[RMDB]
RNA sequence: GGGAACGACUCGAGUAGAGUCGAAAAGAUAUGGAGGAACAUAUGUCAGACGAGACUCGGAAACGAGCUCGCUGACAUCACCCCCUCCCCAAUCCUCCUAAGUCAAAGUUGCUGUUCGCAGCAACAAGAAUCACUUAGGCUUCGGCCUAAGUGAUUCAAAAGAAACAACAACAACAAC
Reactivity to DMS in 0.01 (KOAc 150mM, MgCl2 10mM, bicine 150mM(pH8.5), 24C), signal-to-noise 1, nucleotides 027 to 126: g000a050u000a300u000g000g010a040g030g000a160a170c120a100u000a020u000g020u000c000a000g030a120c000g020a020g010a160c000u000c000g030g000a120a090a120c000g030a000g000c010u010c000g020c020u000g000a010c000a010u000c170a160c050c070c010c000c060u010c040c000c000c080a050a060u000c010c000u000c000c000u000a030a180g010u000c050a120a080a120g000u000u000g000c000u000g010u000u010c120g000c000a020g010c000a000a000c030a060a040